[RMDB]
RNA sequence: GGGAACGACUCGAGUAGAGUCGAAAACCCGGAAUGGGGACUCCGAGGGCCCCUUCCGAAGUGACGGGGGGGGGUCACUAGGAACACUGGGGUCCAGUGGAUCCGUGGGACUACCCUCUCCACCCUCGAGCAUUUGGGUUCGCCCAAAUGAAAAGAAACAACAACAACAAC
Reactivity to 2A3 in 0.01 (KOAc 150mM, MgCl2 10mM, bicine 150mM(pH8.5), 24C), signal-to-noise 9, nucleotides 027 to 129: c000c000c000g000g010a080a100u270g010g000g000g010a010c010u030c060c010g000a010g010g010g000c000c010c000c000u000u000c000c000g010a070a020g220u170g070a040c060g010g000g000g000g000g000g000g000g000u000c010a050c070u010a050g000g010a010a010c000a000c000u020g020g010g060g170u150c060c000a000g000u020g020g050a220u000c010c010g020u170g010g000g000a000c010u300a300c010c000c000u000c000u010c000c000a020c000c000c000u010c000g010a050g010
Reactivity to DMS in 0.01 (KOAc 150mM, MgCl2 10mM, bicine 150mM(pH8.5), 24C), signal-to-noise 8, nucleotides 027 to 129: c010c010c010g000g000a040a050u100g010g000g000g000a050c040u030c060c030g010a040g040g010g030c000c000c000c010u000u000c020c010g030a160a140g060u050g030a040c300g000g000g000g000g000g000g000g000g000u010c020a030c040u020a260g010g000a010a040c010a010c000u000g020g010g050g060u090c020c000a000g000u000g030g010a150u000c000c000g020u030g000g000g000a030c030u110a250c000c000c000u000c000u000c040c040a040c030c000c010u000c010g020a080g020